[RMDB]
RNA sequence: GGGAACGACUCGAGUAGAGUCGAAAAUUUUUGACGGCAGAUUCGAAUGAACUUAAGUUUAUGAUGAAGGUAUGGCUGUUGAGAUUAUUUGGUCGGGAUUGUAGUUUGAAGAUGUGCUCUUUUGAGCAGUCUCAACUUUGCUCGUUCCCGUUAUGGGCACGUCUAAUACGUUCGCGUAUUAGACGUGAAAAGAAACAACAACAACAAC
Reactivity to 2A3 in 0.01 (KOAc 150mM, MgCl2 10mM, bicine 150mM(pH8.5), 24C), signal-to-noise 4, nucleotides 027 to 156: u070u060u010u010u040g010a000c030g030g020c010a040g050a140u050u020c040g030a040a090u060g000a030a030c030u120u210a210a100g040u050u000u050a030u100g070a040u090g010a040a040g090g050u070a070u170g100g000c020u020g000u070u050g010a020g000a030u030u030a060u070u130u120g100g000u080c030g010g000g020a040u040u120g040u050a050g020u050u080u130g060a070a010g000a000u120g050u030g300c000u010c000u060u230u170u300g000a000g000c000a000g000u020c000u000c000a010a020c030u130u060u120g030c030u010c010g020u010u030c020c000c010g000u070u160a080u210g000g010g010
Reactivity to DMS in 0.01 (KOAc 150mM, MgCl2 10mM, bicine 150mM(pH8.5), 24C), signal-to-noise 2, nucleotides 027 to 156: u020u000u000u000u020g020a090c110g000g000c020a120g010a190u000u000c030g010a180a060u010g010a050a040c050u000u000a100a140g020u010u000u000a030u010g000a180u010g000a060a060g030g020u000a080u000g020g020c000u000g020u000u000g010a060g030a100u000u000a060u000u000u010g020g010u000c030g030g020g010a080u000u010g020u000a090g020u000u010u000g000a070a020g000a020u000g020u000g050c020u000c020u010u000u010u000g020a040g030c000a170g010u000c030u000c010a020a030c030u000u000u000g030c110u000c030g020u000u000c000c030c020g000u010u000a030u000g010g010g030